This 207-nucleotide RNA was probed chemically with 2A3 and DMS. For 2A3 the reverse transcriptase was SuperScript II with manganese. Source: RMDB library OK3TST, as collected in RNAgym. For 2A3, 778 sequencing reads were counted. The reactions ran in a buffer of 150 mM KOAc, 10 mM MgCl2 and 150 mM bicine (pH 8.5), at 24 C.

RNA sequence: GGGAACGACUCGAGUAGAGUCGAAAAUUAGCUAUUUGUUCCGUAUACUUCCGGGAACAUGUAUUUUACAAAUUGCGGAGUUGGCAAGCGAACUUCAGCCGCAUUCGAUUCAUAGGAAGGCCAUGAAUCAUGCUUGACGCAUUCCGCAAACUGGUGAACUAUUGCUGCAUUUCGAUGCAGCAAUAGUAAAAGAAACAACAACAACAAC
Reactivity to 2A3 in 0.01 (KOAc 150mM, MgCl2 10mM, bicine 150mM(pH8.5), 24C), signal-to-noise 2, nucleotides 027 to 156: u210u070a010g060c050u050a070u260u100u060g000u030u010c000c020g110u060a060u040a190c050u130u000c060c110g010g010g010a030a000c030a010u020g010u020a150u000u190u020u050a090c110a080a160a170u000u030g000c010g010g010a020g000u020u070g040g030c020a010a000g010c000g070a080a000c020u090u030c040a050g080c040c000g090c060a000u050u020c020g110a110u120u110c010a040u080a010g150g040a010a120g110g000c020c030a150u060g000a000a010u020c020a040u210g000c000u050u020g000a080c030g010c190a000u040u070c000c000g040c000a000a020a000c040u020g040g020u080g050a000
Reactivity to DMS in 0.01 (KOAc 150mM, MgCl2 10mM, bicine 150mM(pH8.5), 24C), signal-to-noise 2, nucleotides 027 to 156: u000u000a120g000c100u010a050u000u010u000g000u000u000c020c010g000u010a140u000a190c300u000u000c020c000g030g000g000a060a000c000a020u010g010u000a120u010u010u000u000a130c060a060a050a180u000u000g010c000g010g000a150g030u010u000g010g000c050a010a050g000c020g000a090a090c230u010u000c020a040g000c060c000g000c100a150u000u000c030g020a150u010u020c100a160u010a150g000g020a160a100g010g020c040c060a160u000g000a030a040u000c040a160u020g020c000u010u040g000a040c000g000c120a060u000u010c000c020g000c000a000a050a070c090u000g010g040u000g010a160